[RMDB]
RNA sequence: GGGAACGACUCGAGUAGAGUCGAAAAUCCGUUUUAAAGAAGGCUCUUGUUAGUCUGACCUAUCGAAAGGGAAUGUAGUUAAGAUUCUACAACUGGGAUGCAGAUUUUCAGCGGUAACGCAUAUGAAGUAUGUGCAAAUUUUCGAAUUUGCACAUACAAAAGAAACAACAACAACAAC
Reactivity to DMS in 0.01 (KOAc 150mM, MgCl2 10mM, bicine 150mM(pH8.5), 24C), signal-to-noise 9, nucleotides 027 to 126: u020c000c020g010u020u030u020u020a040a090a120g010a080a040g010g000c010u000c040u020u010g020u020u010a030g010u000c000u000g000a160c100c040u010a070u020c090g020a080a100a080g010g000g010a090a110u010g000u000a020g010u000u020a100a140g010a180u020u010c010u000a030c040a070a110c090u000g000g000g000a060u010g000c060a050g000a080u010u000u010u010c060a070g010c060g000g000u030a090a100c060g020c060a100u020a100u020g000a120a120
Reactivity to 2A3 in 0.01 (KOAc 150mM, MgCl2 10mM, bicine 150mM(pH8.5), 24C), signal-to-noise 9, nucleotides 027 to 126: u010c020c010g020u070u040u060u210a160a100a030g100a030a050g060g000c010u010c020u110u110g060u140u060a030g020u000c010u020g080a090c020c020u080a090u130c070g100a160a050a030g070g020g030a120a150u090g010u020a020g010u040u080a150a050g030a170u110u010c000u020a030c000a090a030c050u080g020g040g000a020u060g040c030a010g030a100u050u040u030u090c030a010g020c010g010g020u060a100a040c030g010c060a020u040a100u260g020a070a040

This 177-nucleotide RNA was probed chemically with DMS and 2A3. The RNA was probed in 150 mM KOAc, 10 mM MgCl2 and 150 mM bicine (pH 8.5) at 24 C. The data come from the RNA Mapping Database (RMDB), libraries RFM100 and RFMREP.